[RMDB]
RNA sequence: GGGAACGACUCGAGUAGAGUCGAAAACAAAACAAACAAAAACUCUUGCCAAAACACGUGAACAAGAGUAAAGAAAAAGAAAGAAGAGAACACGUGUAAGGCUCUCCAACUACAAACAAACAAACAAGCAGACAGUAUGGUUCGCCAUACUGUCUGCAAAAGAAACAACAACAACAAC
Reactivity to 2A3 in 0.01 (KOAc 150mM, MgCl2 10mM, bicine 150mM(pH8.5), 24C), signal-to-noise 1, nucleotides 027 to 126: c010a020a080a110a000c100a010a100a010c120a000a150a050a050a150c050u060c040u040u110g000c000c020a040a000a140a140c020a020c010g010u040g000a160a040c020a190a020g060a000g130u180a090a000a000g120a070a190a010a070a000g300a040a170a000g160a000a140g030a060g000a000a000c010a000c050g000u000g030u030a060a000g010g000c000u000c000u000c030c000a000a050c020u200a030c010a000a140a000c000a010a010a010c010a000a070a030c070a000a060

Source: RMDB library OK1LIB, as collected in RNAgym. Structure probing data (2A3) for a 177-nucleotide construct. The RNA was probed in 150 mM KOAc, 10 mM MgCl2 and 150 mM bicine (pH 8.5) at 24 C. For 2A3 the reverse transcriptase was SuperScript II with manganese.